Background: Structure probing data (DMS and 2A3) for a 207-nucleotide construct. The RNA was probed in 150 mM KOAc, 10 mM MgCl2 and 150 mM bicine (pH 8.5) at 24 C. Reactivities are given for positions 27 through 156. For DMS the reverse transcriptase was MarathonRT. The 2A3 profile rests on 2,205 reads. 2A3 adducts were read by reverse transcription with SuperScript II with manganese. High DMS reactivity at an A or C suggests that its Watson-Crick edge is free.

[RMDB]
RNA sequence: GGGAACGACUCGAGUAGAGUCGAAAACGCGAGGAGGUCAACUGGCAAAAGAUGUAUCAUUUGUCAGGACAAGUCCCACGGUUAGUUGCCGUCCAGGGCGCAGUUCAGCCAGACAAUUCCGUACCUAUCUACCGUCACCCAGCAGACGAGUCCCCGCUCAUAACCUGGAAUUCGUUCCAGGUUAUGAAAAAGAAACAACAACAACAAC
Reactivity to DMS in 0.01 (KOAc 150mM, MgCl2 10mM, bicine 150mM(pH8.5), 24C), signal-to-noise 2, nucleotides 027 to 156: c040g020c060g030a150g010g000a110g030g020u010c030a050a060c020u000g000g000c000a000a020a080a210g000a210u000g030u000a160u000c040a300u000u000u000g020u000c020a050g000g020a070c070a060a170g000u000c010c010c010a110c040g060g010u000u000a090g010u000u000g000c000c010g000u000c030c000a080g010g030g040c010g000c020a150g010u000u000c040a190g000c020c030a160g030a070c060a040a140u010u000c030c040g020u000a070c040c030u000a120u010c030u000a070c020c020g020u000c030a090c020c030c030a080g000c010a110g030a090c010g000a140g010u010c000c020c000c020g000c250
Reactivity to 2A3 in 0.01 (KOAc 150mM, MgCl2 10mM, bicine 150mM(pH8.5), 24C), signal-to-noise 4, nucleotides 027 to 156: c060g040c050g030a040g000g010a020g000g050u030c040a070a040c040u010g010g010c010a050a040a020a080g120a060u220g100u220a210u210c080a120u060u040u060g010u020c010a010g020g040a000c010a020a040g050u050c000c020c010a000c000g000g000u040u080a060g020u110u200g040c030c010g030u020c040c070a030g040g010g000c020g020c060a010g000u090u070c020a000g010c030c010a020g020a070c020a050a090u120u000c020c030g040u080a110c010c000u060a090u130c020u080a100c060c010g030u040c010a040c020c030c010a050g040c060a030g020a040c020g000a010g050u030c030c010c000c000g020c010